[RMDB]
RNA sequence: GGGAACGACUCGAGUAGAGUCGAAAAGGGCCCGGUGGCCUGAUCUGGAGGGCACUCCGGGCCGUAGGGAAGAAAAGCACCCAGAGGGAGGAAGCCACACAGGGGUUUGCAGAGAAAUCACCUCCAGUAAACCAAUGCUUCGGCAUUGGUAAAAGAAACAACAACAACAAC
Reactivity to DMS in 0.01 (KOAc 150mM, MgCl2 10mM, bicine 150mM(pH8.5), 24C), signal-to-noise 4, nucleotides 027 to 129: g020g060g030c020c010c040g010g010u000g000g000c010c020u020g020a070u030c110u040g030g000a300g000g000g000c030a120c040u000c000c000g000g000g000c000c000g030u040a000g000g000g000a110a000g000a000a060a070a090g000c100a120c040c020c040a100g000a090g000g000g000a040g030g020a040a080g000c110c050a090c170a060c120a040g000g010g020g030u030u060u020g000c090a090g010a110g020a090a080a070u010c030a100c000c000u050c000c000a090g030u000a040a100
Reactivity to 2A3 in 0.01 (KOAc 150mM, MgCl2 10mM, bicine 150mM(pH8.5), 24C), signal-to-noise 5, nucleotides 027 to 129: g050g000g010c000c000c010g020g010u010g010g010c000c020u010g000a080u050c010u050g020g020a050g040g010g010c040a130c140u030c000c000g000g000g000c000c000g010u010a010g000g020g020a050a030g030a030a080a010a010g050c020a050c010c000c010a000g040a020g050g000g000a000g010g010a030a030g010c030c010a040c000a010c020a040g010g030g030g010u040u070u110g050c070a010g050a010g040a100a090a020u070c050a070c060c000u000c000c000a000g010u030a040a060